[RMDB]
RNA sequence: GGGAACGACUCGAGUAGAGUCGAAAACGCAUUACGCUUUUGCGUAAUGCGAUGUAGCGUCUUUUGAUGCUACUAGAUAAGAUGUACGUUACCCCAGUACAUCCAGUACUACUUCCCUGGGUUUUCCCUGGGUUGUAGUUCUGAACUAAGGGGAAGAGGGUAACAUACUCUUCGGAGUAUGUUACCCAAAAGAAACAACAACAACAAC
Reactivity to 2A3 in 0.01 (KOAc 150mM, MgCl2 10mM, bicine 150mM(pH8.5), 24C), signal-to-noise 2, nucleotides 027 to 156: c010g050c000a000u010u000a000c000g090c130u190u300u260u300g030c000g000u000a000a000u000g000c000g000a010u040g000u000a000g000c020g040u060c070u100u300u130u300g000a000u040g000c010u000a000c020u030a020g010a140u140a090a080g010a020u000g000u000a000c020g020u060u130a130c010c000c000c000a000g000u000a000c000a000u000c000c030a000g000u020a000c000u000a000c000u000u020c000c000c000u030g070g000g000u070u060u220u270c030c000c000u030g020g000g000u000u020g000u000a000g000u000u000c000u000g000a010a030c010u060a080a200g010g010g010g030a020a030g120a050
Chemical mapping of a 207-nucleotide RNA with 2A3.
For 2A3 the reverse transcriptase was SuperScript II with manganese.
The RNA was probed in 150 mM KOAc, 10 mM MgCl2 and 150 mM bicine (pH 8.5) at 24 C.